About this RNA:
Structure probing data (2A3 and DMS) for a 177-nucleotide construct. The 2A3 profile rests on 1,487 reads. For DMS, 1,661 sequencing reads were counted.
RNA sequence: GGGAACGACUCGAGUAGAGUCGAAAACAACAGAUCCUUUGAUGUACCUCUUUAACGAAUACUGUUUCUGUUGUAGAAUUAAACUCGUCGAGGCAUCCAAUAGAAACGUGUAUCUGUACGAAAUCAAUACUUGGUGCAUUUUCGAAUGCACCAAGUAAAAAGAAACAACAACAACAAC
Reactivity to 2A3 in 0.01 (KOAc 150mM, MgCl2 10mM, bicine 150mM(pH8.5), 24C), signal-to-noise 2, nucleotides 027 to 126: c030a000a010c020a050g060a130u070c020c000u080u080u160g060a060u050g050u110a130c050c040u120c090u130u180u180a060a010c050g000a050a010u030a030c030u060g010u080u000u000c000u000g070u020u010g020u070a060g050a000a010u180u080a090a100a070c030u030c040g210u090c130g110a010g040g000c030a010u000c020c010a010a030u040a070g060a000a070a040c070g000u060g010u040a040u020c050u060g090u050a000c030g090a090a110a000u110c030a030a070
Reactivity to DMS in 0.01 (KOAc 150mM, MgCl2 10mM, bicine 150mM(pH8.5), 24C), signal-to-noise 3, nucleotides 027 to 126: c070a080a100c120a080g000a050u000c030c040u000u000u010g000a070u000g000u000a090c100c170u010c050u010u000u010a070a060c100g010a070a050u000a030c030u010g010u000u000u000c010u010g040u010u000g000u020a160g000a100a100u000u010a080a080a110c040u000c030g010u020c150g000a030g020g010c120a080u000c030c040a030a050u010a050g010a020a030a030c060g010u000g000u000a070u000c040u000g010u010a080c170g010a070a110a060u020c100a100a110